[RMDB]
Description: The record gives the reactivity of an RNA of 177 nucleotides to 2A3 and DMS. For 2A3 the reverse transcriptase was SuperScript II with manganese. Conditions: 150 mM KOAc, 10 mM MgCl2 and 150 mM bicine (pH 8.5), 24 C. The 2A3 profile rests on 852 reads.

RNA sequence: GGGAACGACUCGAGUAGAGUCGAAAACAAAGCAGCGCACGGUGUUAUUAUCUUGGCGCCAAUGACCAACUUUAACUACCCCGCAACGUUAAAGAACUUUAUUGACCAUGUCUUUGUGGCAAACAAACAUCCCGCUUGAAUUCGUUCAAGCGGGAUGAAAAGAAACAACAACAACAAC
Reactivity to 2A3 in 0.01 (KOAc 150mM, MgCl2 10mM, bicine 150mM(pH8.5), 24C), signal-to-noise 1, nucleotides 027 to 126: c010a000a050a000g090c070a000g000c020g000c030a010c010g000g000u040g030u140u140a180u130u060a070u070c030u020u150g080g000c020g000c060c020a050a070u100g010a040c020c020a040a070c030u070u050u000a040a000c020u110a120c030c010c000c000g000c040a060a030c050g010u020u030a040a020a010g020a050a010c000u200u300u020a100u060u180g090a080c000c000a020u060g080u000c090u030u100u080g000u010g040g000c000a130a020a010c010a000a110a000
Reactivity to DMS in 0.01 (KOAc 150mM, MgCl2 10mM, bicine 150mM(pH8.5), 24C), signal-to-noise 1, nucleotides 027 to 126: c090a090a130a070g000c160a140g010c050g110c040a060c210g000g000u000g020u000u020a130u040u030a100u010c080u000u000g010g000c050g030c020c060a020a070u000g000a090c020c100a090a080c040u000u000u000a000a010c010u000a210c100c000c020c050g000c080a050a130c160g020u060u000a010a000a040g020a120a160c180u000u000u000a050u030u040g050a080c080c040a070u000g000u000c060u000u010u040g000u000g010g050c090a020a000a170c130a030a030a220